Source information
Chemical mapping of a 177-nucleotide RNA with DMS and 2A3. Conditions: 150 mM KOAc, 10 mM MgCl2 and 150 mM bicine (pH 8.5), 24 C. 2A3 adducts were read by reverse transcription with SuperScript II with manganese. For 2A3, 1,585 sequencing reads were counted. Source: RMDB library M2PK50, as collected in RNAgym. DMS adducts were read by reverse transcription with MarathonRT.

RNA sequence: GGGAACGACUCGAGUAGAGUCGAAAAGCAGGAGUGUUCGCACUCCUGCAAAUGAAACCGGCCAGCUCCAGGCCGCCAAACAAUAUGGAGCACAAAGUAAAGAAAGGCCUACGUUCGCGUAGGCCAAGGUACGUAUGUUCUUCGGAACAUACGUACCAAAAGAAACAACAACAACAAC
Reactivity to DMS in 0.01 (KOAc 150mM, MgCl2 10mM, bicine 150mM(pH8.5), 24C), signal-to-noise 1, nucleotides 027 to 126: g000c040a000g000g050a040g100u000g000u010u000c200g030c000a000c000u030c000c000u000g040c010a000a010a070u000g000a000a150a040c300c010g000g000c030c000a080g010c000u000c000c050a000g060g060c000c000g030c150c010a260a100a030c120a000a030u030a160u000g000g000a000g010c000a190c220a030a030a030g000u040a010a170a090g000a020a110a090g000g000c030c000u000a000c000g000u000u000c180g000c040g010u000a000g000g030c020c000a000a000
Reactivity to 2A3 in 0.01 (KOAc 150mM, MgCl2 10mM, bicine 150mM(pH8.5), 24C), signal-to-noise 1, nucleotides 027 to 126: g020c000a010g000g030a000g010u030g020u090u130c140g030c060a000c000u020c010c000u000g000c000a010a000a020u070g020a020a000a020c040c000g010g000c020c010a080g000c000u030c000c000a000g020g010c000c060g030c010c040a200a240a090c050a000a040u020a040u040g000g000a000g110c000a000c010a000a000a000g150u160a070a060a040g080a090a120a020g020g000c000c000u010a030c020g030u040u090c180g030c010g080u000a000g000g000c000c000a000a010